RNA sequence: GGGAACGACUCGAGUAGAGUCGAAAAGUAACCGCCGCCAUGCAGACUGAGAGUGUGCUUAUCAUUAACAUAAUCUAAGCGAAAGUUACCUUGAUAGCUGUGCCAUUCAUCCUCAUUUAUUGUGUAAGUGAUGUCAUAUAUUCGUAUAUGACAUCACAAAAGAAACAACAACAACAAC
Reactivity to DMS in 0.01 (KOAc 150mM, MgCl2 10mM, bicine 150mM(pH8.5), 24C), signal-to-noise 9, nucleotides 027 to 126: g010u010a090a150c030c020g030c140c040g010c020c040a050u000g000c060a060g000a100c090u000g000a130g010a080g020u000g020u000g000c040u010u000a050u000c070a060u000u000a080a080c100a070u000a080a070u010c050u010a070a080g010c050g000a060a100a100g010u000u000a050c090c050u000u000g010a090u010a070g010c030u000g000u000g000c010c020a050u010u000c060a050u000c020c020u000c070a080u000u010u000a070u030u000g010u000g010u010a070a130
Reactivity to 2A3 in 0.01 (KOAc 150mM, MgCl2 10mM, bicine 150mM(pH8.5), 24C), signal-to-noise 9, nucleotides 027 to 126: g030u020a070a030c010c010g030c020c010g000c010c020a050u070g000c010a020g050a110c020u040g030a020g000a010g130u070g020u050g040c000u040u070a100u110c050a070u040u130a060a060c010a050u160a130a050u090c050u070a080a030g020c020g060a080a030a020g030u040u050a050c010c020u050u040g020a050u070a030g000c040u030g020u040g060c010c010a010u050u040c010a030u020c010c020u040c020a030u100u160u180a200u140u160g100u020g030u060a120a080
Chemical mapping of a 177-nucleotide RNA with DMS and 2A3.
Conditions: 150 mM KOAc, 10 mM MgCl2 and 150 mM bicine (pH 8.5), 24 C.
2A3 adducts were read by reverse transcription with SuperScript II with manganese.
The 2A3 profile rests on 18,255 reads.